This 207-nucleotide RNA was probed chemically with DMS and 2A3. It was measured as part of the RMDB library OK3TST. The reactions ran in a buffer of 150 mM KOAc, 10 mM MgCl2 and 150 mM bicine (pH 8.5), at 24 C. DMS (dimethyl sulfate) methylates the pairing face of unpaired adenines and cytosines.

RNA sequence: GGGAACGACUCGAGUAGAGUCGAAAAUAAACAAAUUUGGUGAAGAGCCAGUCUCCACUGCCCUAAGUCUCCACUGUCCUACUGGAAAUAAUUCUGAAGAAGUAAAAAGAACCAGAAAUCAUCAGAGAAACAUACAUUGGUGUAUCACUUGGGAAUAGAGUAAUUUAAUCUUCGGAUUAAAUUACUCAAAAGAAACAACAACAACAAC
Reactivity to DMS in 0.01 (KOAc 150mM, MgCl2 10mM, bicine 150mM(pH8.5), 24C), signal-to-noise 1, nucleotides 027 to 156: u010a100a090a220c030a040a120a130u000u000u000g020g030u000g000a120a090g020a130g030c060c090a090g000u020c070u010c000c020a080c060u010g030c000c020c020u000a040a100g010u000c030u000c000c000a060c040u000g010u000c020c070u020a110c080u000g000g000a040a060a060u000a060a190u000u000c020u000g000a060a120g000a100a140g010u020a050a050a060a010a130g010a080a160c010c050a060g020a070a140a130u000c050a060u000c020a020g010a160g000a080a110a020c060a060u000a050c040a130u020u030g000g000u000g010u000a090u000c030a050c090u000u010g010g020g000a090a100u000a060
Reactivity to 2A3 in 0.01 (KOAc 150mM, MgCl2 10mM, bicine 150mM(pH8.5), 24C), signal-to-noise 3, nucleotides 027 to 156: u110a010a050a000c030a030a070a050u130u080u130g020g000u100g010a120a110g010a020g130c010c030a030g020u010c020u020c010c040a060c030u030g010c020c010c010u040a050a050g020u020c020u020c040c010a020c030u050g060u110c000c020u050a110c010u040g020g060a070a040a070u110a060a090u080u000c020u100g060a070a050g040a070a000g050u180a040a100a100a010a010g090a030a020c000c030a000g030a060a080a040u050c020a010u020c020a000g050a010g020a140a110a030c030a020u230a010c010a020u000u070g000g010u040g020u030a050u090c030a040c060u060u090g050g020g000a020a080u250a170